RNA sequence: GGGAACGACUCGAGUAGAGUCGAAAAGAGUCAUACAACCCCAGAAACCAUUCCUUAUACCUUGAGUAUUGCUGAAUUCAGUUUUGCGUGCAUGCUCUUGGCUAUUCUCAUAGUGAUUGUCAAAUUUAAAACGACGAUGACUUCGGUCAUCGUCGAAGUAUUGGAGCUACUUCGGUAGCUCCAAUACAAAAGAAACAACAACAACAAC
Reactivity to 2A3 in 0.01 (KOAc 150mM, MgCl2 10mM, bicine 150mM(pH8.5), 24C), signal-to-noise 1, nucleotides 027 to 156: g090a000g030u110c110a000u130a110c070a120a120c060c000c000c010a020g250a040a020a010c010c010a050u070u210c030c000u100u120a010u010a170c000c020u020u000g020a020g030u020a030u260u170g040c020u040g060a200a200u150u210c070a190g110u020u100u130u300g120c050g000u010g000c000a020u010g000c000u000c020u040u000g000g000c000u010a030u130u040c120u020c100a080u120a070g060u020g130a230u070u040g020u000c040a020a010a010u120u050u090a090a150a020a050c000g000a000c020g000a000u000g000a000c000u000u060c180g010g000u020c000a000u000c000g000u000c010g000a000a010
This 207-nucleotide RNA was probed chemically with 2A3. 2A3 adducts were read by reverse transcription with SuperScript II with manganese. The reactions ran in a buffer of 150 mM KOAc, 10 mM MgCl2 and 150 mM bicine (pH 8.5), at 24 C. As a SHAPE reagent, 2A3 marks flexible, mostly unpaired nucleotides at the ribose 2'-OH.